The record gives the reactivity of an RNA of 177 nucleotides to DMS. Source: RMDB library M2PK90, as collected in RNAgym.
[RMDB]
RNA sequence: GGGAACGACUCGAGUAGAGUCGAAAAAUUGAUUUGAGACGUCGCCUUGCAGUGUUAACUUGGGUCUCAUGAACCUCUUUGAUCUUCCACAAAGGGUAGGCUACGGGUGAAACCUCUUAGGCUAAAAUCUUUCUACCCCAUUCGUGGGGUAGAAAGAAAAAGAAACAACAACAACAAC
Reactivity to DMS in 0.01 (KOAc 150mM, MgCl2 10mM, bicine 150mM(pH8.5), 24C), signal-to-noise 1, nucleotides 027 to 126: a100u010u000g000a090u010u020u000g000a120g010a110c080g000u020c110g000c050c050u000u030g030c090a030g020u010g030u000u000a070a010c060u000u010g030g010g000u000c010u000c140a070u010g030a040a260c120c020u000c000u000u000u010g020a100u010c030u000u000c070c040a220c000a020a060a030g000g020g000u000a080g020g000c070u000a050c120g000g010g020u000g000a130a050a040c040c000u000c040u030u030a080g010g030c030u000a070a060a070a080